[RMDB]
RNA sequence: GGGAACGACUCGAGUAGAGUCGAAAAGAGGGCGAGUGAUCUCGGAAGGAAUCCCCCAAGCUGCCAACAGAGGAAGAAACAAGACAGAGGAGCCCCCAUGACGCUGGUGAACCAUCGCGAGCUGGGACACAUCGUAUUACUUCGGUAAUACGAUGUGAAAAGAAACAACAACAACAAC
Reactivity to DMS in 0.01 (KOAc 150mM, MgCl2 10mM, bicine 150mM(pH8.5), 24C), signal-to-noise 1, nucleotides 027 to 126: g000a070g000g030g000c040g060a090g020u000g020a020u010c010u010c050g020g040a060a120g020g020a100a170u030c040c020c010c020c030a070a100g020c010u000g000c050c040a070a020c120a100g010a020g000g010a090a060g000a070a110a060c070a030a050g010a120c060a140g030a080g020g010a120g010c030c030c040c010c000a110u000g010a020c050g010c010u010g000g020u010g010a010a060c030c050a030u000c030g010c050g000a050g020c100u010g010g000g020a240
Structure probing data (DMS) for a 177-nucleotide construct. The data come from the RNA Mapping Database (RMDB), library 15KREP. For DMS the reverse transcriptase was MarathonRT.